This 177-nucleotide RNA was probed chemically with DMS. For DMS the reverse transcriptase was MarathonRT.

RNA sequence: GGGAACGACUCGAGUAGAGUCGAAAAAAAUCCAGGAUCAUUGUUAUCGGUUGGGAGGGCAAGAGCAGGCAGGGGAGCCAAUUGGGCUUGGAACAUCUUAUCUCUUAAGGUGGAUGAAAGGGAUAUGCUUACAUCGCUAUUUCGAUAGCGAUGUAAGAAAAGAAACAACAACAACAAC
Reactivity to DMS in 0.01 (KOAc 150mM, MgCl2 10mM, bicine 150mM(pH8.5), 24C), signal-to-noise 2, nucleotides 027 to 126: a040a080a090u010c000c000a150g020g010a040u020c070a100u010u000g000u000u030a020u000c020g010g000u010u000g010g020g010a120g000g000g010c010a080a050g010a060g010c110a090g000g040c120a090g000g000g020g000a070g020c010c010a080a120u030u000g020g010g050c030u000u000g010g000a080a130c100a040u000c030u000u000a020u010c040u010c170u000u020a050a060g020g010u020g010g010a070u000g010a050a040a040g000g000g010a050u000a060u000g020
It was measured as part of the RMDB library OK2TST. The reactions ran in a buffer of 150 mM KOAc, 10 mM MgCl2 and 150 mM bicine (pH 8.5), at 24 C.